The data come from the RNA Mapping Database (RMDB), library OK3TST.
Structure probing data (2A3) for a 207-nucleotide construct.
Values cover nucleotides 27 to 156.
2A3 adducts were read by reverse transcription with SuperScript II with manganese.
For 2A3, 453 sequencing reads were counted.

[RMDB]
RNA sequence: GGGAACGACUCGAGUAGAGUCGAAAAACUUACGAUGGGUUUGCCGGGCUGCAUCCCCACCGUAAGCUGAGGAGAACCUGUACUUUCUAUUGGUGCCUGCUGAUCUACGGAGUUUUUAAAGUACGAUUUAAAAAAAUAAUAAUCCUUAUCAAGGAUAGACUAAUCGAUCAUUCGUGAUCGAUUAGUCAAAAGAAACAACAACAACAAC
Reactivity to 2A3 in 0.01 (KOAc 150mM, MgCl2 10mM, bicine 150mM(pH8.5), 24C), signal-to-noise 1, nucleotides 027 to 156: a000c000u010u030a010c000g020a020u030g000g010g020u030u000u000g040c030c020g180g160g000c110u090g000c000a000u000c000c000c000c000a000c000c000g010u000a000a000g000c010u030g030a020g020g000a040g000a080a080c000c010u000g130u150a040c100u050u140u120c080u120a080u180u090g020g010u060g030c000c020u060g050c040u070g070a170u010c010u030a020c090g060g030a060g000u000u000u090u020u300a020a020a000g010u020a020c010g030a030u100u300u300a160a090a020a000a000a000a000u300a050a020u270a090a030u230c000c010u230u100a300u300c060a190a020g010g000a000u010a010